[RMDB]
RNA sequence: GGGAACGACUCGAGUAGAGUCGAAAACAACUGUUAUCUUGCCACUGCAUUGUUAACACUCCAACAAAUAGAGUUGAAGUUUAAUCCACCUGCUCUACAAAGGGCUGGUAAAGCUGCUAACUUUUGUAACCUAUACAGUUCGCUGUAUAGAAAAGAAACAACAACAACAAC
Reactivity to 2A3 in 0.01 (KOAc 150mM, MgCl2 10mM, bicine 150mM(pH8.5), 24C), signal-to-noise 9, nucleotides 027 to 129: c010a010a030c040u020g020u080u040a080u080c060u050u110g020c020c050a130c120u140g020c040a080u070u070g030u030u030a030a020c020a010c070u000c010c010a030a030c020a050a170a110u230a050g110a010g030u010u020g020a030a010g010u010u040u080a060a030u050c040c010a010c020c010u020g000c000u000c000u040a120c080a060a210a080g010g000g000c000u010g000g010u040a050a040a000g020c020u040g010c010u030a020a030c000u030u030u020u030g070u030a030a020c000
Reactivity to DMS in 0.01 (KOAc 150mM, MgCl2 10mM, bicine 150mM(pH8.5), 24C), signal-to-noise 7, nucleotides 027 to 129: c060a060a050c150u000g000u000u000a050u050c010u000u010g040c050c100a100c110u090g030c080a000u030u050g000u050u000a020a050c020a080c090u000c030c040a070a070c120a080a130a120u100a110g000a010g000u000u000g030a120a060g010u000u020u020a060a080u000c080c100a070c060c000u000g000c000u040c010u030a040c300a100a130a030g040g000g050c000u040g040g020u060a060a060a090g030c020u030g020c080u050a040a030c020u030u010u020u010g000u040a020a020c150